This 207-nucleotide RNA was probed chemically with DMS and 2A3. Conditions: 150 mM KOAc, 10 mM MgCl2 and 150 mM bicine (pH 8.5), 24 C. 2A3 is a SHAPE reagent: it acylates the 2'-hydroxyl of flexible nucleotides of all four kinds. For 2A3 the reverse transcriptase was SuperScript II with manganese. It was measured as part of the RMDB library RSTRND.

RNA sequence: GGGAACGACUCGAGUAGAGUCGAAAAUACUAAGCAGGUGCCGAAACGACUUGUGGCCGGGGUAAUGACCUGGGGUAUAGUAAAAACGCGCCAGAUGACACAAUGGACAAUCCGCAGCCAAGUCCUAAGGUGCAGGAGACUUCUCUCCUGCACUAUGCUUAUGAACCUUGUUCGCAAGGUUCAUAAGAAAAGAAACAACAACAACAAC
Reactivity to DMS in 0.01 (KOAc 150mM, MgCl2 10mM, bicine 150mM(pH8.5), 24C), signal-to-noise 2, nucleotides 027 to 156: u010a090c060u000a080a230g020c030a140g010g030u010g020c020c020g010a090a110a140c030g020a060c050u000u000g040u000g030g010c040c010g030g000g030g030u010a090a090u000g010a060c020c000u000g010g020g010g020u000a050u000a100g010u000a040a080a040a110a070c080g000c070g020c030c040a090g010a080u000g000a120c040a060c080a110a100u010g000g000a060c030a090a080u010c040c000g040c040a090g000c030c030a050a150g010u000c010c010u010a040a130g000g030u000g000c010a030g040g010a030g010a070c120u000u010c100u000c000u000c010c000u000g020c000a000c010u000a010u000g030
Reactivity to 2A3 in 0.01 (KOAc 150mM, MgCl2 10mM, bicine 150mM(pH8.5), 24C), signal-to-noise 5, nucleotides 027 to 156: u080a020c050u070a040a030g020c040a020g030g020u050g070c050c020g080a120a060a040c080g040a050c040u070u080g040u070g080g010c020c010g020g000g000g010u040a070a100u100g090a080c010c010u020g010g000g020g020u050a050u050a120g100u090a070a050a050a000a020c050g020c010g000c030c010a020g020a080u060g040a020c010a000c010a120a090u070g000g020a010c010a030a080u070c030c030g030c050a020g030c030c030a060a010g020u030c010c030u080a160a040g010g010u000g000c000a000g000g000a000g010a030c120u280u060c090u090c000u010c100c000u000g000c010a000c000u000a010u030g000